[RMDB]
RNA sequence: GGGAACGACUCGAGUAGAGUCGAAAAACUAAGCCGGACGGCGCCCUCGCACCAGUUCCGCUGUGGGUUCGCCUACAAGAACGUACGGUGUUGAGGCCCUGUCCGCCGCUGCGCUGCCACCUACUCUUCGCGCCGCUAGUCGAUCGGACUCCGGGUGUCAUAACGUUUUGUUCGCAAAACGUUAUGAAAAAGAAACAACAACAACAAC
Reactivity to 2A3 in 0.01 (KOAc 150mM, MgCl2 10mM, bicine 150mM(pH8.5), 24C), signal-to-noise 4, nucleotides 027 to 156: a000c070u100a080a020g060c030c000g020g000a010c010g020g010c060g000c050c030c010u000c010g020c000a000c000c000a010g000u010u000c010c000g020c020u000g000u010g000g020g000u020u060c260g080c050c000u010a000c000a040a150g010a010a000c010g030u140a030c110g000g000u010g000u080u300g010a000g000g000c010c030c000u020g010u000c000c000g000c000c030g000c020u040g000c030g010c020u100g040c040c020a080c030c030u070a080c030u070c030u140u200c070g000c010g010c030c010g010c060u040a030g070u090c030g100a190u080c080g030g050a040c030u020c020c020g060g000g040u040g030
Reactivity to DMS in 0.01 (KOAc 150mM, MgCl2 10mM, bicine 150mM(pH8.5), 24C), signal-to-noise 1, nucleotides 027 to 156: a120c040u000a090a060g030c080c050g040g020a020c050g010g000c040g000c080c040c010u000c030g010c010a040c000c020a250g000u010u000c040c010g000c160u020g060u000g020g020g030u010u000c300g050c050c000u000a010c050a200a050g000a070a020c030g020u000a080c180g000g010u000g020u000u010g030a050g000g010c020c030c000u000g010u000c040c020g030c020c040g030c030u010g000c020g050c020u000g040c030c040a050c040c010u000a120c030u000c050u010u010c020g020c040g020c030c020g030c040u000a120g010u000c030g020a180u000c040g030g000a110c040u000c050c030g010g020g030u000g000
This 207-nucleotide RNA was probed chemically with 2A3 and DMS. For 2A3 the reverse transcriptase was SuperScript II with manganese. The RNA was probed in 150 mM KOAc, 10 mM MgCl2 and 150 mM bicine (pH 8.5) at 24 C. The DMS profile rests on 3,268 reads. Values cover nucleotides 27 to 156.